[RMDB]
RNA sequence: GGGAACGACUCGAGUAGAGUCGAAAACGUGCAUGCGAAAGGAUGGAACCUCGCCAUCCGAAACGUACGGUAAUUCGUAACCUUAACGGUAUACCGGAUGGGAAAGCAUGCAGCUACAGGAUGGGAAAGCAUGCGUAUGCUCCAUCCGAAACGUACGCCUAUGGAAACUAUUCGUAGUUUCCAUAGGAAAAGAAACAACAACAACAAC
Reactivity to 2A3 in 0.01 (KOAc 150mM, MgCl2 10mM, bicine 150mM(pH8.5), 24C), signal-to-noise 9, nucleotides 027 to 156: c060g040u030g010c010a010u010g010c010g100a150a030a040g010g010a010u030g010g050a100a150c030c050u110c110g020c010c010a000u000c010c000g000a020a010a000c000g010u040a010c010g000g020u050a090a150u100u090c040g030u040a100a140c030c040u060u150a090a020c040g010g020u060a020u020a110c010c000g010g010a030u030g020g020g040a080a060a010g000c000a000u010g000c000a000g010c010u050a060c050a070g000g020a020u020g010g000g060a080a170a070g030c010a020u140g100c100g120u300a020u050g000c020u000c010c000a010u000c000c000g000a020a040a000c050g020u090a030c060g030
Reactivity to DMS in 0.01 (KOAc 150mM, MgCl2 10mM, bicine 150mM(pH8.5), 24C), signal-to-noise 5, nucleotides 027 to 156: c050g030u000g020c010a050u000g010c020g010a120a110a190g000g010a020u000g000g000a060a140c130c080u010c110g010c030c000a000u000c000c010g010a020a090a100c030g030u000a020c010g010g000u000a030a150u000u000c050g030u010a080a080c090c070u010u000a090a110c070g010g010u000a140u000a030c020c000g000g010a040u010g010g010g000a120a130a160g000c010a030u000g010c000a090g030c060u000a090c080a180g010g000a110u000g000g000g020a070a110a130g010c000a020u000g020c230g010u000a050u000g030c010u000c000c000a020u010c000c000g010a020a020a070c060g000u000a070c120g000